[RMDB]
RNA sequence: GGGAACGACUCGAGUAGAGUCGAAAAGCGCGUGAGCGGGAUCUCUGUGCAGGCGGAGGCGGCCUGAAAGGCGCUUAUCCCCGGCACCACUUCGUAGGGUAUCCUCGCCGCCCUCAGCCAGGAGAGCCACAGUGUCAAUCUUCGGAUUGACACUGUGAAAAGAAACAACAACAACAAC
Reactivity to 2A3 in 0.01 (KOAc 150mM, MgCl2 10mM, bicine 150mM(pH8.5), 24C), signal-to-noise 2, nucleotides 027 to 126: g060c030g030c040g100u120g010a120g060c070g040g020g010a030u010c020u020c000u030g070u060g080c040a040g070g000c050g120g010a010g010g020c050g090g200c000c010u070g070a090a060a060g050g000c020g030c000u030u040a140u100c000c000c000c010g000g000c000a000c010c000a070c060u190u080c100g130u120a070g010g010g020u170a080u110c020c040u050c040g010c010c010g000c020c020c030u070c020a020g000c000c000a050g050g040a040g000a000g000c040
Reactivity to DMS in 0.01 (KOAc 150mM, MgCl2 10mM, bicine 150mM(pH8.5), 24C), signal-to-noise 2, nucleotides 027 to 126: g030c050g030c070g030u000g020a130g010c070g000g020g010a100u000c000u000c020u000g010u000g020c070a090g000g000c120g060g020a040g010g020c050g040g030c020c050u000g000a050a080a150g000g010c020g000c010u000u000a110u000c010c000c000c090g000g000c030a030c030c200a090c090u000u000c130g030u010a060g000g020g010u010a090u010c000c000u010c090g010c030c060g000c030c010c030u000c040a130g010c050c040a100g020g010a050g010a090g030c130
Description: The record gives the reactivity of an RNA of 177 nucleotides to 2A3 and DMS. 2A3 adducts were read by reverse transcription with SuperScript II with manganese. The DMS profile rests on 2,066 reads. Conditions: 150 mM KOAc, 10 mM MgCl2 and 150 mM bicine (pH 8.5), 24 C.